[RMDB]
RNA sequence: GGGAACGACUCGAGUAGAGUCGAAAAUAUGGAGGUAAGAAUAAAGUAACAGGGCUGUGAGUUACUGAUAUGCAACAAACCUCUUCAUUGGCCACUUACAUUUCUCGCACGUGACAACUUUCAUCGUCAACGCUUCUUCAAACGGAACAACCGCCGACUAAAUGGAUGAGUUCGCUCAUCCAUUUAGAAAAGAAACAACAACAACAAC
Reactivity to DMS in 0.01 (KOAc 150mM, MgCl2 10mM, bicine 150mM(pH8.5), 24C), signal-to-noise 2, nucleotides 027 to 156: u000a130u000g000g010a040g010g040u000a080a170g020a140a130u010a050a150a090g000u060a010a040c030a120g000g050g070c030u010g020u010g040a160g030u010u000a060c030u000g000a230u000a060u000g000c060a070a110c060a070a180a070c030c000u000c050u010u000c090a110u000u010g030g060c050c030a080c080u010u000a080c040a130u000u010u010c050u000c040g010c120a090c050g030u000g020a080c050a090a140c100u010u010u010c060a090u000c050g020u000c010a050a090c090g000c030u000u000c000u020u000c060a030a130a150c000g010g010a110a020c060a040a100c030c000g000c040c010g020a230
Reactivity to 2A3 in 0.01 (KOAc 150mM, MgCl2 10mM, bicine 150mM(pH8.5), 24C), signal-to-noise 4, nucleotides 027 to 156: u260a080u090g030g000a000g010g020u070a110a060g060a100a120u130a140a150a020g020u000a040a030c030a060g060g090g000c050u080g040u030g070a040g020u020u030a000c010u000g020a030u060a030u280g050c040a040a030c030a050a190a030c010c020u040c000u070u060c030a070u020u060g030g020c010c020a020c040u030u070a040c000a100u030u140u030c070u030c050g050c020a060c110g060u040g040a040c010a040a070c120u110u200u130c090a100u050c020g040u020c010a050a050c020g000c020u060u000c010u040u070c040a000a100a050c020g020g020a030a030c010a030a050c060c060g010c010c000g050a050
Source information: This 207-nucleotide RNA was probed chemically with DMS and 2A3. It was measured as part of the RMDB library OK3TST. The RNA was probed in 150 mM KOAc, 10 mM MgCl2 and 150 mM bicine (pH 8.5) at 24 C. For DMS, 3,438 sequencing reads were counted. For 2A3, 1,956 sequencing reads were counted. 2A3 adducts were read by reverse transcription with SuperScript II with manganese.